[RMDB]
RNA sequence: GGGAACGACUCGAGUAGAGUCGAAAAUUAAAAGGGAACGACUCGAGUAGAGUCGAAAAGACGCUCUACUCAUGGAGCGCAAGACGAAUAGCUACAUAUUCGACAUGAGGGCGCCGUUCGCAAAAAAGUUUAUGCUAAAGUUCGCUUUAGCAUAAACAAAAGAAACAACAACAACAAC
Reactivity to 2A3 in 0.01 (KOAc 150mM, MgCl2 10mM, bicine 150mM(pH8.5), 24C), signal-to-noise 2, nucleotides 027 to 126: u040u050a060a100a000a100g010g000g010a010a010c000g000a000c000u000c000g000a000g020u010a000g010a000g000u000c000g000a000a000a000a000g030a010c010g010c000u010c000u000a020c020u010c020a030u040g040g020a050g000c010g000c040a030a030g070a020c000g010a010a010u010a010g050c110u190a070c070a140u040a040u020u010c010g020a000c020a020u090g010a050g030g040g000c020g000c020c040g060u050u030c090g020c150a080a080a010a000a010a030
Reactivity to DMS in 0.01 (KOAc 150mM, MgCl2 10mM, bicine 150mM(pH8.5), 24C), signal-to-noise 2, nucleotides 027 to 126: u000u000a140a030a050a160g000g010g010a040a060c000g000a000c000u000c000g000a050g010u000a060g000a020g000u000c000g000a000a010a080a100g000a110c040g000c000u000c010u000a050c060u000c020a040u000g020g000a030g010c030g000c050a070a080g010a040c000g040a020a020u000a020g000c290u010a130c150a100u000a040u000u000c010g000a080c040a080u000g000a050g000g000g030c080g010c040c030g020u000u000c060g010c020a000a120a060a100a070a050
An RNA of 177 nucleotides, treated with 2A3 and DMS and read out base by base. The DMS profile rests on 1,376 reads. The reactions ran in a buffer of 150 mM KOAc, 10 mM MgCl2 and 150 mM bicine (pH 8.5), at 24 C. Values are in units of 0.01, from 0 to 300, in steps of 10.